Conditions: 150 mM KOAc, 10 mM MgCl2 and 150 mM bicine (pH 8.5), 24 C. Chemical mapping of a 207-nucleotide RNA with 2A3 and DMS. The 2A3 profile rests on 4,987 reads. Reactivities are given for positions 27 through 156.
[RMDB]
RNA sequence: GGGAACGACUCGAGUAGAGUCGAAAAGGGGUCUAGAUUGUCAGACUCCGGAAGGAGUGAUGACCAUGGCUGAAGCCUCCACGGCCAUGCAAGCUCCGCGGAGUCUUGGAUUUAUCUAGACGGAGGCACCCAAAAGCAGCAACUUCGGUUGCUGCAAGUGUUGAAUUUAGUUCGCUAAAUUCAACACAAAAGAAACAACAACAACAAC
Reactivity to 2A3 in 0.01 (KOAc 150mM, MgCl2 10mM, bicine 150mM(pH8.5), 24C), signal-to-noise 3, nucleotides 027 to 156: g010g010g050g000u010c010u000a000g000a000u020u080g050u100c190a080g020a010c010u010c000c000g050g060a230a150g010g020a010g010u040g070a300u020g010a020c010c000a010u010g000g000c000u040g040a110a010g020c000c000u000c000c000a020c000g000g010c000c000a000u010g010c020a100a300g000c010u010c010c030g070c020g000g000a010g010u000c010u040u170g060g000a010u150u150u130a000u000c000u000a000g000a000c010g000g000a000g000g000c010a030c010c010c000a000a180a050a010g010c000a000g000c000a000a020c010u070u200c300g100g000u000u000g000c000u000g010c000a000a010
Reactivity to DMS in 0.01 (KOAc 150mM, MgCl2 10mM, bicine 150mM(pH8.5), 24C), signal-to-noise 1, nucleotides 027 to 156: g000g020g040g030u000c010u000a000g010a080u000u000g010u000c020a070g000a020c000u020c010c020g050g010a100a160g000g000a070g060u000g030a110u000g000a130c260c000a000u000g010g000c020u000g010a040a110g010c030c020u000c020c010a300c050g020g000c000c010a000u000g020c030a050a090g010c010u000c000c010g000c000g000g010a020g030u000c010u000u020g000g000a080u000u000u000a010u010c000u010a040g000a030c010g000g000a010g110g060c010a100c000c020c000a070a080a200a130g020c000a020g040c010a020a020c010u000u010c300g030g020u010u010g020c000u000g010c000a010a020